[RMDB]
RNA sequence: GGGAACGACUCGAGUAGAGUCGAAAAGAGCAUGUGAAACUAUAAAGAGCAUUCUUAAGGCCUAGGUCACAUGAAAACAGGUGGCAGUGGGCUGGAUUUGGCCUGUGGGCUGCAGUUUGCCAACCUGAUCAAUGAAGAACUUCGGUUCUUCAUUGAUAAAAGAAACAACAACAACAAC
Reactivity to 2A3 in 0.01 (KOAc 150mM, MgCl2 10mM, bicine 150mM(pH8.5), 24C), signal-to-noise 5, nucleotides 027 to 126: g050a030g050c020a010u020g010u050g040a110a100a110c040u080a100u190a300a160a030g070a030g010c030a050u140u050c080u190u190a170a130g060g000c000c010u020a020g030g030u010c000a000c000a000u040g020a090a120a040a010c020a010g010g010u000g020g000c020a040g070u160g040g190g000c000u000g010g030a050u140u070u190g030g010c020c010u080g060u300g160g030g000c010u030g020c010a000g000u130u210u060g010c010c010a070a070c090c000u050g040
Reactivity to DMS in 0.01 (KOAc 150mM, MgCl2 10mM, bicine 150mM(pH8.5), 24C), signal-to-noise 6, nucleotides 027 to 126: g010a140g010c010a020u010g010u010g000a070a090a110c040u000a100u010a080a070a090g010a160g010c060a050u010u010c140u010u010a120a130g010g000c030c050u000a040g000g010u000c000a010c010a010u010g000a060a050a080a290c030a020g000g030u000g000g000c000a060g020u010g040g010g010c000u000g000g010a110u000u010u010g010g010c010c010u010g020u000g030g020g010c020u000g010c060a010g000u000u000u000g010c010c020a020a080c010c010u000g000
Notes
The data come from the RNA Mapping Database (RMDB), library OK2TRN. This 177-nucleotide RNA was probed chemically with 2A3 and DMS. For DMS the reverse transcriptase was MarathonRT. The RNA was probed in 150 mM KOAc, 10 mM MgCl2 and 150 mM bicine (pH 8.5) at 24 C. The DMS profile rests on 8,519 reads. For 2A3 the reverse transcriptase was SuperScript II with manganese. Values cover nucleotides 27 to 126.